[RMDB]
RNA sequence: GGGAACGACUCGAGUAGAGUCGAAAACAGAGCCCAUGAUAGCCAGGUUACCCACUUGUGGACUUCCUUGACCACUUAAUUGAGUCAAUCUAACCCUCACCUUCUCUCUCCUCUCACUCCAUUUAGCAAGUUGAGAAUGUUUCGACAUUCUCAACUUAAAAGAAACAACAACAACAAC
Reactivity to DMS in 0.01 (KOAc 150mM, MgCl2 10mM, bicine 150mM(pH8.5), 24C), signal-to-noise 4, nucleotides 027 to 126: c110a140g000a150g000c010c020c020a100u010g020a090u010a070g030c050c050a060g010g010u000u000a090c050c010c030a090c090u000u000g030u010g000g020a090c080u000u000c060c080u010u010g000a090c010c010a060c100u010u000a070a100u000u010g010a120g020u010c020a050a110u000c070u000a100a110c060c020c000u010c040a080c050c020u000u000c020u000c030u000c030u000c020c010u000c020u000c040a080c080u000c020c030a050u010u000u020a100g030c180
Reactivity to 2A3 in 0.01 (KOAc 150mM, MgCl2 10mM, bicine 150mM(pH8.5), 24C), signal-to-noise 2, nucleotides 027 to 126: c040a010g120a020g020c000c020c030a030u120g050a070u030a030g040c020c030a020g040g040u060u080a080c000c020c000a040c070u100u120g050u070g050g000a050c000u070u010c020c020u010u060g060a040c010c040a070c050u080u150a100a100u150u110g010a040g020u020c020a030a110u030c030u050a070a100c010c000c000u000c010a030c000c000u020u000c000u000c000u000c000u010c020c000u010c000u020c010a040c030u040c020c000a030u030u040u010a080g060c050

Conditions: 150 mM KOAc, 10 mM MgCl2 and 150 mM bicine (pH 8.5), 24 C. Structure probing data (DMS and 2A3) for a 177-nucleotide construct. The DMS profile rests on 4,147 reads. For 2A3 the reverse transcriptase was SuperScript II with manganese.